[RMDB]
RNA sequence: GGGAACGACUCGAGUAGAGUCGAAAAGCUCAGCGAGAAGUUCACGCAGCAAGCGCUCUCCAGCUUCCACACCACCGAGAAGAGCGGAGGCGUCAAGCGCAAAUUGGGAUUCAACGAGUUCAACAACCUCACCAAUUUGAGCAAGAACAAAACCGAGCGUAAUGGGAGAAUUCGUUCUCCCAUUACGAAAAGAAACAACAACAACAAC
Reactivity to DMS in 0.01 (KOAc 150mM, MgCl2 10mM, bicine 150mM(pH8.5), 24C), signal-to-noise 1, nucleotides 027 to 156: g030c060u000c030a230g030c020g020a110g020a110a080g010u000u010c040a030c030g020c000a150g040c070a120a080g030c000g010c010u000c000u000c000c020a110g000c020u000u000c000c000a080c080a120c040c110a180c130c060g000a200g020a140a020g000a020g000c030g040g020a110g080g030c020g080u020c070a030a300g020c000g020c000a000a050a020u000u010g000g000g010a210u000u020c150a080a080c060g030a050g060u000u000c040a140a190c190a100a190c230c070u000c030a100c020c020a010a070u020u000u000g000a020g010c020a040a220g020a060a140c020a030a050a130a200c050c040g010a080g010
Reactivity to 2A3 in 0.01 (KOAc 150mM, MgCl2 10mM, bicine 150mM(pH8.5), 24C), signal-to-noise 4, nucleotides 027 to 156: g030c010u010c030a020g000c020g020a090g020a170a040g020u030u010c020a010c100g060c010a020g000c030a100a090g000c040g000c010u170c000u000c160c020a030g010c010u080u010c030c000a070c030a030c090c020a090c030c080g100a130g040a280a030g020a030g030c030g000g000a000g030g010c000g020u050c070a110a060g000c000g000c020a010a010a000u010u000g010g020g040a060u140u120c050a050a030c050g040a020g030u090u120c030a050a080c010a030a070c080c020u020c010a030c030c000a010a000u000u020u030g020a030g010c050a090a060g020a070a020c040a040a110a020a040c060c040g030a020g030